[RMDB]
RNA sequence: GGGAACGACUCGAGUAGAGUCGAAAACGCCGUCGAUGAGCAAAGGCCAGAUCAGGUUCCAUCCGCCUUGUCUAUGGGCGUACCCACGCAUGCCUCGAUAGAUCUGGUGUGACCGCGGGACGACUGCCCGCGCAGGUAGCUUCGGCUACCUGCGCGGAAAAGAAACAACAACAACAAC
Reactivity to 2A3 in 0.01 (KOAc 150mM, MgCl2 10mM, bicine 150mM(pH8.5), 24C), signal-to-noise 2, nucleotides 027 to 126: c030g060c030c000g050u050c030g050a230u160g190a060g020c010a000a120a000g000g050c000c000a030g000a130u070c080a160g030g030u130u120c000c020a010u000c030c050g000c000c000u050u110g000u100c070u090a110u120g090g020g000c050g000u100a080c000c000c000a060c110g090c000a040u160g000c000c000u010c000g150a120u050a050g110a070u030c050u050g000g000u100g050u080g060a000c020c020g000c000g010g000g040a000c030g000a020c000u060g000c000